[RMDB]
RNA sequence: GGGAACGACUCGAGUAGAGUCGAAAACGUGUCCGUCGGCGUAGCCGACAACAUGCCCAGGUAGCCCAGACCUUCACGGCUACGGUGCGUUGCGACGCACGGUCUGAUUCUUCACAACGACGUUCACAAGAUCGGAUCACUUUCGAGUGAUCCGAAAAUUCCCAUUCCGAUUCGUCGGAAUGGGAAUAAAAGAAACAACAACAACAAC
Reactivity to 2A3 in 0.01 (KOAc 150mM, MgCl2 10mM, bicine 150mM(pH8.5), 24C), signal-to-noise 2, nucleotides 027 to 156: c040g000u010g010u050c110c060g000u000c020g000g000c200g120u130a100g030c000c010g040a000c000a000a000c040a030u080g050c020c000c000a010g010g010u000a030g020c000c020c080a030g010a040c000c000u040u030c040a000c090g000g000c000u000a000c010g010g000u000g000c000g010u000u090g040c150g100a010c000g000c000a010c030g010g020u020c030u020g040a140u130u110c050u230u170c080a030c000a190a100c090g150a010c010g070u050u180c040a030c010a140a010g050a200u030c000g000g020a000u010c000a000c000u020u080u140c070g010a020g000u000g010a000u000c000c000g010a000a000a000
Reactivity to DMS in 0.01 (KOAc 150mM, MgCl2 10mM, bicine 150mM(pH8.5), 24C), signal-to-noise 1, nucleotides 027 to 156: c050g000u010g020u000c090c150g030u010c000g030g020c020g020u000a120g060c000c010g010a070c020a040a020c000a050u000g010c000c030c060a170g000g010u000a030g010c070c000c080a110g010a190c100c080u000u000c130a150c090g000g020c020u000a110c040g010g000u000g000c010g060u010u010g020c030g010a160c000g000c010a030c040g020g000u000c030u010g010a290u000u010c100u010u010c040a060c030a020a020c020g050a010c030g000u000u000c050a130c120a050a060g010a190u000c000g000g010a040u010c000a020c000u000u010u000c300g060a050g000u000g010a010u000c000c000g010a000a010a030
An RNA of 207 nucleotides, treated with 2A3 and DMS and read out base by base. DMS adducts were read by reverse transcription with MarathonRT. It was measured as part of the RMDB library M2RFPK. Conditions: 150 mM KOAc, 10 mM MgCl2 and 150 mM bicine (pH 8.5), 24 C.